Conditions: 150 mM KOAc, 10 mM MgCl2 and 150 mM bicine (pH 8.5), 24 C.
Structure probing data (2A3) for a 177-nucleotide construct.
RNA sequence: GGGAACGACUCGAGUAGAGUCGAAAAACUUGCCGACGCUGAGUUACCUAUUUCUCGUCUGCAGACAUGGGAAUAUCUGCGUAUGUCGAUUGUCCACUUGAUGUAAUUUAGCUCUCGAAUAUGAUUAGCAAAGGCAAUCAUUCGUGAUUGCCUUUGCAAAAGAAACAACAACAACAAC
Reactivity to 2A3 in 0.01 (KOAc 150mM, MgCl2 10mM, bicine 150mM(pH8.5), 24C), signal-to-noise 4, nucleotides 027 to 126: a000c070u090u160g060c010c000g030a040c000g000c020u020g030a020g050u010u170a300c010c010u010a040u030u070u020c070u010c030g190u100c120u190g010c090a010g000a050c030a100u020g010g030g020a080a010u080a170u110c020u060g000c000g030u080a120u110g080u020c040g060a090u030u110g060u080c040c020a060c050u030u060g060a060u040g100u090a120a040u050u080u040a010g010c000u010c000u000c060g030a150a030u160a080u200g200a280u110u140a000